[RMDB]
RNA sequence: GGGAACGACUCGAGUAGAGUCGAAAAACUUCUACUCUGAGUGAACGCGGCAACUGAUAAACGCAACCGACACGGAUGCAACGGUGACCGACGCCGAGAUCGAGGCCUUCUUUGCUGAAGAGGCUGCCGCUCUCGUCUGAAGGAACCAGCCUGGCUCGACUUUGUACUUCUUCGGAAGUACAAAGUCAAAAGAAACAACAACAACAAC
Reactivity to 2A3 in 0.01 (KOAc 150mM, MgCl2 10mM, bicine 150mM(pH8.5), 24C), signal-to-noise 3, nucleotides 027 to 156: a010c040u260u080c000u030a000c000u000c090u180g010a000g010u060g020a120a010c100g030c030g040g040c050a070a040c110u170g080a110u180a160a100a030c080g000c020a080a100c020c010g100a040c100a040c260g050g000a040u080g000c020a060a050c140g020g000u030g060a080c010c010g020a010c030g000c010c030g010a010g000a000u020c030g000a020g030g010c010c010u240u180c000u110u200u160g190c140u220g050a040a010g000a000g030g000c020u030g120c200c010g020c010u000c000u000c000g040u000c030u060g020a020a000g030g000a010a020c020c000a000g010c010c000u010g040g000c000u020c100
Chemical mapping of a 207-nucleotide RNA with 2A3.
For 2A3, 1,108 sequencing reads were counted.
It was measured as part of the RMDB library ARCHII.
2A3 adducts were read by reverse transcription with SuperScript II with manganese.